[RMDB]
RNA sequence: GGGAACGACUCGAGUAGAGUCGAAAAUGCUCCUGGUGUAGCCGCAGCACAGGCCUUAAAGGAGAUUGAACGCUUGGCAUGUUGGUCGGUUAAGCAAGCGAACUUAACAUCAUUAGUAUUGAAUGCGACCAUGCCUAAUAUUCGUAUUAGGCAUGGUAAAAGAAACAACAACAACAAC
Reactivity to 2A3 in 0.01 (KOAc 150mM, MgCl2 10mM, bicine 150mM(pH8.5), 24C), signal-to-noise 2, nucleotides 027 to 126: u070g030c000u010c000c000u030g030g000u030g020u050a020g030c000c000g090c020a010g030c010a040c020a110g070g000c000c010u120u170a090a070a010g070g020a090g030a050u030u060g070a070a000c040g010c030u030u020g070g000c020a080u080g040u100u080g150g000u040c030g040g000u060u020a040a010g020c040a060a010g030c030g020a030a020c000u080u090a060a020c010a040u120c020a050u030u130a020g060u060a100u080u140g110a150a070u140g060c010g020
Reactivity to DMS in 0.01 (KOAc 150mM, MgCl2 10mM, bicine 150mM(pH8.5), 24C), signal-to-noise 7, nucleotides 027 to 126: u010g010c030u000c010c020u000g020g020u000g000u010a100g020c040c020g000c090a100g000c060a090c090a120g010g010c030c030u000u010a070a100a080g010g010a060g010a120u010u000g010a110a120c170g000c040u000u000g010g010c060a070u000g010u000u010g020g010u000c050g010g010u000u000a040a090g010c050a060a080g020c070g000a080a090c050u000u000a050a060c060a070u000c070a050u000u000a060g010u000a080u000u000g000a070a100u010g000c130g010